[RMDB]
RNA sequence: GGGAACGACUCGAGUAGAGUCGAAAACAUCAUUAAGAAGAGUAAUGUCAUUGAUAUGCUAAGUUUAAUGGCAAAGGCGCUUCAAGGUAAGCACCUCGAUGAUCCACGAAUUAUUUAUGCUAAGGCGUCCGUUACAAGAUUUCGAUCUUGUAACGGAAAAAGAAACAACAACAACAAC
Reactivity to DMS in 0.01 (KOAc 150mM, MgCl2 10mM, bicine 150mM(pH8.5), 24C), signal-to-noise 3, nucleotides 027 to 126: c080a050u000c030a050u010u000a070a120g020a080a060g010a070g010u020a070a150u000g000u000c020a030u000u000g000a020u000a070u000g010c150u000a090a100g010u000u000u010a010a020u000g010g010c070a030a080a110g050g020c050g010c000u000u000c010a120a060g010g010u010a010a040g010c060a030c030c000u000c150g000a050u010g000a070u000c020c030a080c190g010a080a070u010u020a100u010u000u000a060u030g010c070u020a060a110g020g010c090g010
Reactivity to 2A3 in 0.01 (KOAc 150mM, MgCl2 10mM, bicine 150mM(pH8.5), 24C), signal-to-noise 2, nucleotides 027 to 126: c010a020u060c020a010u170u210a130a060g020a060a030g010a050g070u060a160a060u060g010u010c010a030u010u050g050a010u060a020u220g090c050u070a040a010g030u000u050u110a050a040u010g000g000c000a040a000a070g170g010c040g000c010u030u010c050a060a040g110g020u070a060a060g070c030a010c010c010u010c030g010a010u020g020a030u000c000c020a090c050g030a010a050u100u090a060u050u250u030a080u150g030c010u120a050a090g140g000c020g100